[RMDB]
This 177-nucleotide RNA was probed chemically with DMS and 2A3. In probing experiments dimethyl sulfate is read out at A N1 and C N3, which are open when not base-paired. The data come from the RNA Mapping Database (RMDB), library TTRDES.
RNA sequence: GGGAACGACUCGAGUAGAGUCGAAAAGAUAUGGAACCGCCAAGACAUGAUUAGCCUCGGAAACGAGGUGGGAUCAACAGCUUGGACGGUUCCUAAGUCAAAGCAUGACGUGUUCGCACGUCAUGCACACACGAUAGUGCUUCGGCACUAUCGUGUGAAAAGAAACAACAACAACAAC
Reactivity to DMS in 0.01 (KOAc 150mM, MgCl2 10mM, bicine 150mM(pH8.5), 24C), signal-to-noise 4, nucleotides 027 to 126: g010a040u000a220u020g000g010a010a000c000c000g030c000c000a020a010g020a090c150a160u010g010a010u000u000a300g010c000c000u000c000g020g000a030a040a140c000g000a020g000g040u000g000g010g030a010u000c000a040a060c250a120g000c000u010u000g010g000a130c000g010g020u000u000c000c000u000a000a050g000u000c000a130a140a110g000c000a000u000g010a010c000g020u000g010u000u020c270g030c000a000c000g010u000c000a000u000g020c000a090
Reactivity to 2A3 in 0.01 (KOAc 150mM, MgCl2 10mM, bicine 150mM(pH8.5), 24C), signal-to-noise 3, nucleotides 027 to 126: g000a010u040a010u080g000g000a000a010c000c010g010c010c010a010a010g030a110c140a300u270g030a010u000u030a000g000c000c010u020c000g020g020a030a020a020c010g010a010g000g010u030g010g170g020a000u010c020a080a230c100a280g080c010u010u000g000g080a060c010g000g010u020u010c000c000u000a000a000g010u010c030a140a100a040g020c010a010u010g000a010c010g000u030g060u050u210c300g030c090a000c000g000u000c000a000u000g000c010a010